[RMDB]
RNA sequence: GGGAACGACUCGAGUAGAGUCGAAAAAGCAUGGUAUGGUGCACGGAAAUCGAAUUUCAGGUCUACUUGUCUGCCCCCUCUGAUGUCCCUUGUUGCGGCUUUGAUUUGGGGGCCUGGUUCCGACCCAUGCAAAUACAACAUUCGUGUUGUAUUUGCAAAAAGAAACAACAACAACAAC
Reactivity to 2A3 in 0.01 (KOAc 150mM, MgCl2 10mM, bicine 150mM(pH8.5), 24C), signal-to-noise 8, nucleotides 027 to 126: a000g010c030a020u050g050g020u210a100u170g050g010u060g000c040a010c050g040g050a060a050a040u120c070g040a090a140u080u100u080c020a030g090g000u020c020u050a090c020u090u080g050u070c050u080g010c000c000c000c000c010u020c010u030g060a060u050g090u120c020c030c020u040u140g180u080u120g030c090g000g010c000u130u040u060g070a110u080u080u100g020g000g010g010g000c000c000u010g010g000u060u010c010c010g010a040c010c010c000a000
Reactivity to DMS in 0.01 (KOAc 150mM, MgCl2 10mM, bicine 150mM(pH8.5), 24C), signal-to-noise 6, nucleotides 027 to 126: a070g020c040a040u010g010g020u010a040u020g000g030u000g000c050a150c060g010g000a030a050a060u010c100g030a100a300u020u010u020c020a050g000g010u000c030u010a060c030u000u000g000u020c120u010g000c030c010c000c020c000u010c030u000g000a120u010g000u000c000c010c020u010u020g020u010u000g010c300g000g000c040u010u010u010g010a170u010u000u010g020g010g010g010g020c020c030u000g000g020u010u000c010c020g020a260c010c000c030a150
Structure probing data (2A3 and DMS) for a 177-nucleotide construct.
Source: RMDB libraries RFM100 and RFMREP, as collected in RNAgym.
The RNA was probed in 150 mM KOAc, 10 mM MgCl2 and 150 mM bicine (pH 8.5) at 24 C.